[RMDB]
About this RNA
Conditions: 150 mM KOAc, 10 mM MgCl2 and 150 mM bicine (pH 8.5), 24 C. Structure probing data (DMS and 2A3) for a 177-nucleotide construct. The data come from the RNA Mapping Database (RMDB), libraries RFM100 and RFMREP.
RNA sequence: GGGAACGACUCGAGUAGAGUCGAAAAAUGCGUGGUUUGCGGCCCUAAUUUAUUCAGCACGCGACUGCCGCAUCCCGCACGGGAGGCGCAGCUGCUGCAUGACGCUUUAACGUCGCAGCUCACCACCCAUUCUGGGACGAUUCGUCGUCCCAGAAUGAAAAGAAACAACAACAACAAC
Reactivity to DMS in 0.01 (KOAc 150mM, MgCl2 10mM, bicine 150mM(pH8.5), 24C), signal-to-noise 4, nucleotides 027 to 126: a100u010g010c110g060u000g000g000u010u010u010g020c020g020g010c030c300c260u000a040a070u010u000u010a080u040u020c040a060g030c070a030c160g020c020g020a050c020u000g020c080c070g000c000a030u000c000c000c010g000c300a080c200g000g000g000a040g000g000c020g010c030a010g000c030u000g050c000u000g010c050a040u040g000a020c300g010c100u010u020u050a110a180c270g030u000c020g000c020a000g000c010u010c040a030c010c010a120c020c010
Reactivity to 2A3 in 0.01 (KOAc 150mM, MgCl2 10mM, bicine 150mM(pH8.5), 24C), signal-to-noise 7, nucleotides 027 to 126: a000u140g010c090g020u070g010g000u040u030u080g010c000g000g000c000c010c010u050a080a090u060u100u170a170u060u080c030a010g030c020a030c150g020c030g060a070c030u020g080c090c040g000c010a020u020c000c000c000g070c090a080c130g000g000g010a010g010g010c030g000c030a010g000c030u040g000c010u020g030c090a170u100g010a000c040g050c080u090u090u100a120a020c040g000u010c010g000c000a000g010c010u020c010a010c000c000a020c010c000